Source information:
The record gives the reactivity of an RNA of 207 nucleotides to 2A3 and DMS. DMS (dimethyl sulfate) methylates the pairing face of unpaired adenines and cytosines. It was measured as part of the RMDB library OK3TST. The reactions ran in a buffer of 150 mM KOAc, 10 mM MgCl2 and 150 mM bicine (pH 8.5), at 24 C.

RNA sequence: GGGAACGACUCGAGUAGAGUCGAAAAUAUAGAGCAGACGGGGUUGUUUAGCGUGACCUCUGUAGCAGCUUUACGGCAAGCGGGAAAGUAUACUGUUAAAACGGGUGAUCAUACCGUCACAUUCUCAAACGUUUACAAUGACGCCUUUGGCUCUGGAACGACAUAGUAGGUUCGCCUACUAUGUCGUAAAAGAAACAACAACAACAAC
Reactivity to 2A3 in 0.01 (KOAc 150mM, MgCl2 10mM, bicine 150mM(pH8.5), 24C), signal-to-noise 3, nucleotides 027 to 156: u100a000u000a010g030a010g030c040a010g070a130c050g000g000g020g020u020u070g070u060u240u160a070g010c030g060u070g010a060c020c000u060c010u040g020u070a020g010c050a000g000c030u030u080u180a040c020g020g000c090a080a020g010c050g040g010g000a030a100a000g000u040a080u020a110c050u050g040u150u130a040a060a090a030c040g030g000g000u030g020a090u050c030a070u070a120c060c010g010u010c010a130c020a080u140u010c070u070c060a050a060a060c030g000u030u070u050a110c110a080a040u040g020a020c010g040c030c010u100u090u090g050g000c010u020c040u080g010g030a050
Reactivity to DMS in 0.01 (KOAc 150mM, MgCl2 10mM, bicine 150mM(pH8.5), 24C), signal-to-noise 2, nucleotides 027 to 156: u010a150u000a110g000a130g030c030a110g030a070c040g000g000g090g020u000u000g000u000u000u000a090g040c100g020u010g000a120c030c010u010c090u010g030u000a070g000c050a070g000c020u010u010u000a050c060g020g000c020a070a140g040c010g020g020g000a070a050a220g000u000a140u000a050c030u000g050u000u000a060a050a090a130c140g020g000g010u000g000a090u000c100a050u000a070c020c020g000u010c020a080c060a090u000u000c030u000c040a060a070a120c070g000u000u000u000a070c080a030a050u000g010a030c020g010c030c030u000u010u000g000g000c010u000c000u030g020g010a300